[RMDB]
RNA sequence: GGGAACGACUCGAGUAGAGUCGAAAAAUUACCACACUCUGAUAAUUUGCGAGAUACGGUGCGCCCAAACAGGGAGUAAUGGCUAUCCUGAGCGCGAUAGCGUUUCAUGAGUACAGAGGGGAUAUUGAAAGCAUAAUAUAUCCCAGUAAUGUCCGUCCCUUAGGCGGAAAUUCGUUUCCGCCUAAGGAAAAGAAACAACAACAACAAC
Reactivity to DMS in 0.01 (KOAc 150mM, MgCl2 10mM, bicine 150mM(pH8.5), 24C), signal-to-noise 1, nucleotides 027 to 156: a050u000u000a040c000c020a070c090a120c060u000c060u030g030a120u000a030a060u000u000u010g000c050g010a140g010a120u000a070c050g000g050u000g010c010g000c020c030c040a040a060a100c140a110g020g030g000a040g010u000a100a040u010g030g030c030u000a020u000c010c070u010g010a090g040c010g020c050g010a110u010a070g040c100g030u000u010u000c010a080u000g000a070g020u000a120c030a060g000a110g060g030g030g010a050u000a010u010u030g030a130a090a110g070c110a110u020a090a070u030a030u000a070u000c020c000c000a180g000u010a040a060u000g010u000c030c030g010u000c020
Reactivity to 2A3 in 0.01 (KOAc 150mM, MgCl2 10mM, bicine 150mM(pH8.5), 24C), signal-to-noise 2, nucleotides 027 to 156: a010u020u030a030c010c000a020c000a020c050u020c010u040g110a140u060a230a140u090u040u140g030c050g000a040g010a030u050a100c090g020g060u050g000c010g000c040c000c000a110a170a120c020a010g000g020g000a020g010u070a110a140u150g100g050c020u020a060u110c010c000u050g070a050g060c080g000c030g100a050u080a010g000c020g000u050u020u000c070a060u060g020a010g050u040a040c010a010g020a060g000g030g020g000a020u000a010u040u000g050a120a080a000g080c030a010u040a120a070u040a050u010a010u060c000c000c000a000g030u020a000a060u080g020u030c000c000g050u070c010
Chemical mapping of a 207-nucleotide RNA with DMS and 2A3. 2A3 adducts were read by reverse transcription with SuperScript II with manganese. DMS adducts were read by reverse transcription with MarathonRT.